[RMDB]
The data come from the RNA Mapping Database (RMDB), library OK1LIB. Chemical mapping of a 177-nucleotide RNA with 2A3. The reactions ran in a buffer of 150 mM KOAc, 10 mM MgCl2 and 150 mM bicine (pH 8.5), at 24 C. 2A3 adducts were read by reverse transcription with SuperScript II with manganese.
RNA sequence: GGGAACGACUCGAGUAGAGUCGAAAACUGCUGCAAAAGCUGGAUGCGGCGAGCCAAGCUAAGUGGGAGGAGCGCUUGGAGGAUCCGUUCUUUGCCAACCUUAUUCCGUCGUGGGAAUCGAUGGCUGCCUCCGGUGCACGUUCGCGUGCACCGGAGGAAAAGAAACAACAACAACAAC
Reactivity to 2A3 in 0.01 (KOAc 150mM, MgCl2 10mM, bicine 150mM(pH8.5), 24C), signal-to-noise 2, nucleotides 027 to 126: c030u040g010c000u040g030c030a000a150a000a060g000c050u080g010g000a060u040g050c050g000g010c000g020a000g040c020c000a080a000g000c010u190a250a010g050u050g030g100g050a080g020g060a080g020c090g000c010u010u080g030g000a050g070g000a070u020c000c010g020u000u040c000u120u030u120g070c030c000a060a140c100c060u090u080a070u120u000c000c000g010u150c030g040u100g110g000g030a040a070u080c090g070a100u050g000g000c000u000g030